Structure probing data (2A3 and DMS) for a 170-nucleotide construct. Values cover nucleotides 27 to 129. For DMS the reverse transcriptase was MarathonRT. 2A3 adducts were read by reverse transcription with SuperScript II with manganese. Reactivities are rounded to 0.1 and cut off at 0 and 3. High 2A3 reactivity points to a flexible backbone, as in loops and unpaired stretches. The reactions ran in a buffer of 150 mM KOAc, 10 mM MgCl2 and 150 mM bicine (pH 8.5), at 24 C. For 2A3, 3,266 sequencing reads were counted.
RNA sequence: GGGAACGACUCGAGUAGAGUCGAAAAUGCACGUAUUAAAGCUAAGCACAUUGUCUAUGUAGGAGAUCCAGCACAGUUGCCAGCUCCUAGGACUUUGUUGACUAGAGGCACAUUGGAACCAGAAAAUACACCCAGCCGUUCGCGGCUGGGAAAAGAAACAACAACAACAAC
Reactivity to 2A3 in 0.01 (KOAc 150mM, MgCl2 10mM, bicine 150mM(pH8.5), 24C), signal-to-noise 2, nucleotides 027 to 129: u060g020c010a000c110g140u050a100u050u120a100a040a000g080c000u040a000a050g000c000a010c000a060u030u030g000u020c020u020a210u120g170u030a030g020g000a040g010a050u080c030c000a000g000c010a080c060a150g060u130u100g020c020c000a020g000c030u000c020c010u000a040g000g000a030c000u020u090u080g070u010u010g110a060c000u000a000g000a020g040g010c000a000c000a000u010u090g040g010a000a000c010c000a090g190a020a120a000a010u140a000c030a030
Reactivity to DMS in 0.01 (KOAc 150mM, MgCl2 10mM, bicine 150mM(pH8.5), 24C), signal-to-noise 3, nucleotides 027 to 129: u040g000c010a130c200g000u030a080u020u010a150a000a000g000c000u000a130a020g080c180a000c020a030u000u050g000u040c080u040a070u080g040u090a010g000g000a010g050a010u260c130c140a180g110c070a060c170a200g120u030u060g080c030c000a040g000c000u100c100c000u000a030g000g000a060c090u020u110u000g040u000u080g040a040c020u000a010g000a020g000g090c080a120c010a000u000u010g150g000a180a170c060c140a090g060a000a040a050a100u110a050c240a080